Annotation: Chemical mapping of a 207-nucleotide RNA with DMS and 2A3. The reactions ran in a buffer of 150 mM KOAc, 10 mM MgCl2 and 150 mM bicine (pH 8.5), at 24 C. For 2A3 the reverse transcriptase was SuperScript II with manganese. DMS adducts were read by reverse transcription with MarathonRT. The DMS profile rests on 4,374 reads.
RNA sequence: GGGAACGACUCGAGUAGAGUCGAAAACAGGAGAUUCGUCUCCUGAAAAAGAUAUGGAUCUCUAGUAGGCAUCGAUCUUGGUUCCAGUCGGAAACGACUGGAGACCAAGGGAGCCUACAGGGAGAUCCUAAGUCAAAAAUACCCGUUCGCGGGUAAAGAAGUAAGAAAGAUUCGUCUUUCUUACUUCAAAAGAAACAACAACAACAAC
Reactivity to DMS in 0.01 (KOAc 150mM, MgCl2 10mM, bicine 150mM(pH8.5), 24C), signal-to-noise 2, nucleotides 027 to 156: c010a040g010g000a050g020a060u000u000c290g010u000c010u000c000c000u000g010a020a050a130a130a180g070a120u010a290u000g010g010a010u000c000u000c000u000a250g020u000a030g000g010c020a210u000c220g010a070u000c000u000u000g000g030u000u000c000c010a040g000u000c010g000g020a210a100a240c020g000a030c010u000g000g000a000g020a010c030c020a000a010g000g020g000a060g030c010c000u000a000c010a050g020g030g010a010g000a020u010c000c000u000a000a050g020u010c030a030a080a070a160a190u000a060c010c000c040g000u000u010c220g030c050g000g010g040u000a010a040a110
Reactivity to 2A3 in 0.01 (KOAc 150mM, MgCl2 10mM, bicine 150mM(pH8.5), 24C), signal-to-noise 3, nucleotides 027 to 156: c020a000g030g000a000g000a020u070u180c170g090u020c070u000c000c000u000g000a050a000a000a000a000g000a020u090a030u110g000g000a000u000c000u010c000u000a000g000u000a000g010g010c050a170u270c110g050a030u030c010u000u010g010g000u000u000c000c000a000g000u000c000g000g060a130a070a100c010g000a000c000u010g000g000a010g000a010c000c000a000a000g000g000g000a000g000c010c000u000a000c000a010g070g000g010a000g000a000u000c000c000u000a030a000g010u000c030a000a020a090a040a100u250a040c200c010c000g010u040u030c300g000c010g050g090g000u060a060a040a050